[RMDB]
An RNA of 177 nucleotides, treated with 2A3 and read out base by base. The 2A3 profile rests on 721 reads.
RNA sequence: GGGAACGACUCGAGUAGAGUCGAAAAGAAUGGGUGCCACUGGUGUACCGGCUGUUCGAAAGAGCACGUGCCGGGCAGCCACGCACCACGGGGUAAGAGCUGAACGCAUCUAAGCUCGAAACCCACCGAGUAGACGCGAGUUCGCUCGCGUCUACUCAAAAGAAACAACAACAACAAC
Reactivity to 2A3 in 0.01 (KOAc 150mM, MgCl2 10mM, bicine 150mM(pH8.5), 24C), signal-to-noise 1, nucleotides 027 to 126: g080a030a140u130g060g000g000u010g000c020c020a050c040u030g000g000u070g050u250a210c000c000g000g010c000u000g020u000u000c000g020a090a050a050g000a010g000c030a000c280g080u140g030c000c000g000g040g000c000a000g050c020c020a000c120g020c000a000c000c000a000c000g000g090g010g010u070a090a030g000a000g000c000u000g040a130a020c050g050c200a000u000c010u050a030a120g000c000u030c000g000a040a020a010c000c000c010a000c120c000
It was measured as part of the RMDB library RFM100.